The record gives the reactivity of an RNA of 207 nucleotides to 2A3. Conditions: 150 mM KOAc, 10 mM MgCl2 and 150 mM bicine (pH 8.5), 24 C. 2A3 adducts were read by reverse transcription with SuperScript II with manganese. Source: RMDB library RNAMAK, as collected in RNAgym. For 2A3, 933 sequencing reads were counted.
[RMDB]
RNA sequence: GGGAACGACUCGAGUAGAGUCGAAAAGGGGUCGCACCUGACUCGAUUGUGGAGCUUGGAUUUAUAAGGCUGAAGCCUCCACGGCCUUAUUGUCAGCUCCACAAAUCGAGGAUGGUGCGACGGAGGCACCCAAAACGUUGCUCUUCGGAGCAACGAACAAAGGCUCAGGUUUCGACCUGAGCCUUUGAAAAGAAACAACAACAACAAC
Reactivity to 2A3 in 0.01 (KOAc 150mM, MgCl2 10mM, bicine 150mM(pH8.5), 24C), signal-to-noise 1, nucleotides 027 to 156: g090g050g010g000u000c000g000c000a000c000c000u030g050a050c000u030c000g020a000u010u000g000u000g000g010a030g040c080u110u110g170g000a110u220u300u070a050u070a000a000g010g020c000u000g040a160a070g040c010c050u000c050c000a020c000g020g000c000c010u020u000a010u000u010g040u020c000a010g000c010u000c000c000a000c000a000a000a000u020c000g000a010g000g000a020u030g000g000u000g000c000g000a000c000g000g000a020g000g020c030a080c000c010c000a100a090a020a040c020g010u000u000g000c000u000c000u010u100c270g140g020a000g000c010a000a010c000g000a050a000